Chemical mapping of a 177-nucleotide RNA with 2A3. For 2A3 the reverse transcriptase was SuperScript II with manganese. The RNA was probed in 150 mM KOAc, 10 mM MgCl2 and 150 mM bicine (pH 8.5) at 24 C.
RNA sequence: GGGAACGACUCGAGUAGAGUCGAAAAGCAGUAUACUGCCACUUGUGUGAGAAUACUUUUAGUACAAGCGAGUACACGCAGUAUACUGCCACUUGUGUGAGAAUACUUUUAGUACAAGCGAGUACACGCCUUGUUUCCUGUUCGCAGGAAACAAGGCAAAAGAAACAACAACAACAAC
Reactivity to 2A3 in 0.01 (KOAc 150mM, MgCl2 10mM, bicine 150mM(pH8.5), 24C), signal-to-noise 2, nucleotides 027 to 126: g000c000a010g000u000a010u000a000c000u000g000c000c000a020c000u040u130g060u070g000u040g100a150g070a190a030u100a210c000u080u210u030u170a090g000u030a000c000a040a030g010c000g020a000g000u010a070c070a030c030g000c000a000g010u000a000u000a010c000u000g000c020c010a040c000u000u000g000u040g030u050g080a070g100a150a160u190a100c000u000u000u030u300a070g000u010a030c010a160a000g080c010g040a080g030u000a010c050a000c040